[RMDB]
RNA sequence: GGGAACGACUCGAGUAGAGUCGAAAAGGCCGAGCGCCAAGGGAGGGAGGGAAUAUAUACAAGGGGCGAUUUAAGGUGCAAGUAUGUAUAGGGAAGUGAAGAAGCGCCGAAAACUUCACACGGCCGAACGUAUAGCAUACUUCGGUAUGCUAUACGUAAAAGAAACAACAACAACAAC
Reactivity to 2A3 in 0.01 (KOAc 150mM, MgCl2 10mM, bicine 150mM(pH8.5), 24C), signal-to-noise 1, nucleotides 027 to 126: g000g010c010c000g080a040g070c010g010c050c030a020a030g110g030g130a300g050g040g030a190g030g010g020a080a000u110a000u070a020u020a090c010a050a070g030g010g050g000c030g030a000u000u110u170a100a000g000g000u020g030c030a100a010g050u100a190u200g160u050a090u100a100g000g000g000a110a100g080u060g040a010a000g050a030a010g050c120g000c000c000g000a010a000a010a040c010u040u030c010a000c020a010c040g000g030c030c000g000a000